[RMDB]
Structure probing data (2A3) for a 207-nucleotide construct.
High 2A3 reactivity points to a flexible backbone, as in loops and unpaired stretches.
The 2A3 profile rests on 1,573 reads.
RNA sequence: GGGAACGACUCGAGUAGAGUCGAAAAGCAACUUAGGAUUUUAGGCUCCCCGUGCGUGUCUCGAACCAUGCCGGGCCAAACUCACGGGGGCUGGCGGUCCCCGUGCGGUCAAAAUCAAACCGCUGGAAAAACAGUUCUAGCUUCGGCUAGAACUGAACACUAUGCCAGUGUUCGCACUGGCAUAGUGAAAAGAAACAACAACAACAAC
Reactivity to 2A3 in 0.01 (KOAc 150mM, MgCl2 10mM, bicine 150mM(pH8.5), 24C), signal-to-noise 2, nucleotides 027 to 156: g000c030a030a150c090u140u140a120g090g050a230u160u100u030u100a100g040g000c080u140c000c020c000c000g070u170g040c030g000u030g030u020c100u060c260g080a060a050c040c010a030u050g000c000c010g030g000g010c020c020a110a000a000c010u010c000a000c000g000g000g020g000g000c000u000g010g010c000g000g020u000c030c000c000c000g020u020g000c010g000g040u080c050a050a070a070a200u070c020a100a130a120c000c020g050c040u050g080g030a060a110a000a010a010c000a010g010u020u000c000u000a010g000c000u030u060c200g080g000c010u000a000g010a010a000c000u000g000a000a000